[RMDB]
RNA sequence: GGGAACGACUCGAGUAGAGUCGAAAACACAACAAUUCACAUAAGGGACUCUCAUGGGGAUCCCCUUAAAGCUGCUCUUGCAGCAAGGGACCUUAUUGACAAAGAGCAAGUGCAAAACAAAACAAAACAUGACGUACGACUUCGGUCGUACGUCAUGAAAAGAAACAACAACAACAAC
Reactivity to 2A3 in 0.01 (KOAc 150mM, MgCl2 10mM, bicine 150mM(pH8.5), 24C), signal-to-noise 2, nucleotides 027 to 126: c160a040c030a110a000c010a020a010u150u150c040a050c010a240u190a030a130g000g050g220a210c020u080c000u000c040a020u150g000g000g070g000a200u030c000c000c040c000u000u080a270a090a000g020c000u000g000c010u040c060u220u220g000c020a030g010c000a010a000g010g000g000a020c010c020u000u030a080u030u130g040a000c150a040a130a000g000a000g000c080a110a000g020u000g020c000a000a000a110a070c020a050a000a080a100c070a060a100a000a000